[RMDB]
RNA sequence: GGGAACGACUCGAGUAGAGUCGAAAAUGAGCAUGUAUUUGAGCAUCCUAUGCUUGGUUAGGGGUAGAUCAUAAAAGACUUCAAGGUAGAUUUUGUAUUGUGAACUGGAUCUCGCAAAACGGUUGGAAUUUUGACAAGUUAACGAUGGUAGAGAGAAAUUAAUAAUCCUGUUCGCAGGAUUAUUAAUAAAAGAAACAACAACAACAAC
Reactivity to 2A3 in 0.01 (KOAc 150mM, MgCl2 10mM, bicine 150mM(pH8.5), 24C), signal-to-noise 4, nucleotides 027 to 156: u110g000a020g000c030a020u070g020u180a130u080u130u150g050a030g000c010a030u070c020c020u070a050u090g020c010u050u030g030g040u060u060a040g010g000g000g010u030a030g010a060u060c010a010u140a090a130a020a030g040a040c030u050u030c130a030a020g060g020u050a030g050a080u050u080u050u110g030u030a100u050u080g030u010g020a050a030c030u020g010g010a030u040c020u040c060g010c040a040a080a000a030c040g020g000u020u010g040g040a040a040u070u040u040u060g030a030c020a070a030g040u050u060a100a010c050g030a020u060g030g030u090a030g020a000g010a000g040a090a230
Reactivity to DMS in 0.01 (KOAc 150mM, MgCl2 10mM, bicine 150mM(pH8.5), 24C), signal-to-noise 3, nucleotides 027 to 156: u000g000a070g010c030a070u010g010u010a080u000u000u000g010a120g010c010a120u000c050c040u000a110u000g010c030u000u000g020g010u000u000a070g010g000g040g030u010a010g040a050u000c040a130u000a060a100a110a150g000a080c040u000u000c060a050a070g010g040u000a070g010a140u000u000u000u010g030u000a080u010u020g030u020g010a070a100c020u000g030g000a090u000c030u000c030g030c060a030a050a070a080c040g020g010u000u000g000g010a070a110u000u010u010u000g000a080c050a030a100g020u000u010a050a070c060g000a050u000g000g020u000a050g010a110g010a090g010a100a120